Annotation: Structure probing data (2A3) for a 207-nucleotide construct. Values cover nucleotides 27 to 156.
[RMDB]
RNA sequence: GGGAACGACUCGAGUAGAGUCGAAAACCUUCCUCGCGGCCAGACACGGACUGCACGCCCUUUGGGCAAGGGAUGGUUCUCCAUCUCGCACCGUGCCCUGUUGUGGCAACCGUCUUUUCUCCGUCGCUAAUUUGUCCUGGGCAGAAAUGUCUGCUCGCUUUACGUGGUGCUUCGGCACCACGUAAAGAAAAGAAACAACAACAACAAC
Reactivity to 2A3 in 0.01 (KOAc 150mM, MgCl2 10mM, bicine 150mM(pH8.5), 24C), signal-to-noise 1, nucleotides 027 to 156: c010c000u050u020c010c050u070c070g030c000g000g050c020c060a040g040a080c020a000c090g000g090a100c040u070g060c080a080c140g040c010c010c000u240u300u250g000g000g000c010a030a030g020g000g000a030u000g050g000u140u220c100u100c160c000a000u000c000u020c000g020c020a120c110c060g090u060g000c040c000c010u100g030u110u100g130u190g000g030c000a040a050c000c040g050u040c060u040u010u030u060c050u040c030c010g080u120c010g000c030u070a110a140u020u060u170g050u060c020c020u020g000g030g010c000a000g090a030a140a040u120g090u090c000u000g000c010u020c010g020
The reactions ran in a buffer of 150 mM KOAc, 10 mM MgCl2 and 150 mM bicine (pH 8.5), at 24 C. 2A3 adducts were read by reverse transcription with SuperScript II with manganese. Reactivities are rounded to 0.1 and cut off at 0 and 3.